[RMDB]
RNA sequence: GGGAACGACUCGAGUAGAGUCGAAAAGUGAAAGCUCCUUCUCUCGCAAUGUGUAACUCAUGAUUCUCAUGACCCCUGGUUGGAGAGAUCCGGACUAGGACCCAGGGGGCCUCUGAUUCUGCCAGCCAAAACUGUCGUAAGUUCGCUUACGACAGAACAAGUCCCAAAGGUUCGCCUUUGGGACUUGAAAAGAAACAACAACAACAAC
Reactivity to 2A3 in 0.01 (KOAc 150mM, MgCl2 10mM, bicine 150mM(pH8.5), 24C), signal-to-noise 1, nucleotides 027 to 156: g080u070g050a130a060a030g030c000u050c020c000u060u010c080u030c010u040c050g110c080a070a060u090g030u030g000u160a100a030c010u010c080a020u010g050a200u150u060c120u030c070a040u050g080a080c010c000c000c000u040g010g020u050u100g010g020a040g000a010g000a090u000c000c060g040g040a100c060u080a060g030g030a010c010c000c010a000g000g010g010g020g000c000c010u000c040u010g050a080u080u000c000u050g080c010c000a020g030c040c040a060a000a030a110c010u000g000u000c000g010u000a000a000g000u030u090c150g000c160u000u000a000c000g000a010c000a000g000a000a000
Record summary: The record gives the reactivity of an RNA of 207 nucleotides to 2A3. It was measured as part of the RMDB library M2RFPK. 2A3 adducts were read by reverse transcription with SuperScript II with manganese. The RNA was probed in 150 mM KOAc, 10 mM MgCl2 and 150 mM bicine (pH 8.5) at 24 C.